The record gives the reactivity of an RNA of 177 nucleotides to DMS. Source: RMDB library OK2TST, as collected in RNAgym. The RNA was probed in 150 mM KOAc, 10 mM MgCl2 and 150 mM bicine (pH 8.5) at 24 C. For DMS, 1,118 sequencing reads were counted. Values cover nucleotides 27 to 126. DMS adducts were read by reverse transcription with MarathonRT.

RNA sequence: GGGAACGACUCGAGUAGAGUCGAAAAAGGCUGAGAUAGAAGGAUCGCUUAAGCCUGGGAGUUUGAGGCUGCAGUGAGCCGUGAUUGUUCAACUGCACUCUAGUCUGGGUGACAGUGAGACCCUAGCGGGUGGUUUAGGUUUCGACCUAAACCACCCAAAAGAAACAACAACAACAAC
Reactivity to DMS in 0.01 (KOAc 150mM, MgCl2 10mM, bicine 150mM(pH8.5), 24C), signal-to-noise 1, nucleotides 027 to 126: a060g010g030c040u000g000a030g030a090u000a040g010a190a100g000g000a260u000c010g000c010u000u000a060a180g020c010c030u000g010g000g000a050g000u000u020u000g010a040g060g000c180u000g020c040a030g000u000g020a060g000c010c120g010u040g010a110u020u000g010u020u000c010a060a020c000u000g000c000a050c030u000c000u000a060g000u000c040u000g000g040g000u000g000a070c160a000g000u000g000a080g010a100c080c000c000u020a080g020c240